An RNA of 177 nucleotides, treated with DMS and 2A3 and read out base by base. The 2A3 profile rests on 2,657 reads. The data come from the RNA Mapping Database (RMDB), library OK2TRN. DMS adducts were read by reverse transcription with MarathonRT. High 2A3 reactivity points to a flexible backbone, as in loops and unpaired stretches.
[RMDB]
RNA sequence: GGGAACGACUCGAGUAGAGUCGAAAAAUCCUUGAAGAGGAGGGCGGUGGCCGAGGCAGGAGGCCGGCAUCCGUGAGGCAGGGACUCCCACAAGCGAGGCUAAGGCUUCAUAGCUGACCAGCAGGUGAGUAAAUGUAACCUUCGGGUUACAUUUACUAAAAGAAACAACAACAACAAC
Reactivity to DMS in 0.01 (KOAc 150mM, MgCl2 10mM, bicine 150mM(pH8.5), 24C), signal-to-noise 4, nucleotides 027 to 126: a130u010c020c010u000u000g000a080a070g000a120g000g000a050g020g010g010c080g000g030u010g010g000c040c040g000a080g020g020c080a080g010g000a110g000g010c020c020g010g020c060a110u000c040c070g020u010g000a110g010g020c060a060g000g000g000a090c080u000c020c010c010a120c170a080a090g010c080g000a090g020g000c040u010a060a140g000g000c020u000u000c090a110u010a070g020c020u000g000a100c110c030a110g010c070a080g010g010u010g010
Reactivity to 2A3 in 0.01 (KOAc 150mM, MgCl2 10mM, bicine 150mM(pH8.5), 24C), signal-to-noise 2, nucleotides 027 to 126: a000u020c000c000u020u080g070a080a030g040a050g120g000a020g030g040g010c040g030g090u060g070g000c040c010g060a060g050g070c060a050g040g040a010g000g090c020c000g010g050c010a060u040c020c020g030u060g070a060g060g000c040a020g000g000g060a050c020u040c020c010c000a040c020a030a020g050c040g070a030g020g000c010u050a110a080g040g000c000u040u020c060a070u140a040g000c030u030g020a080c000c000a020g010c040a020g060g090u140g060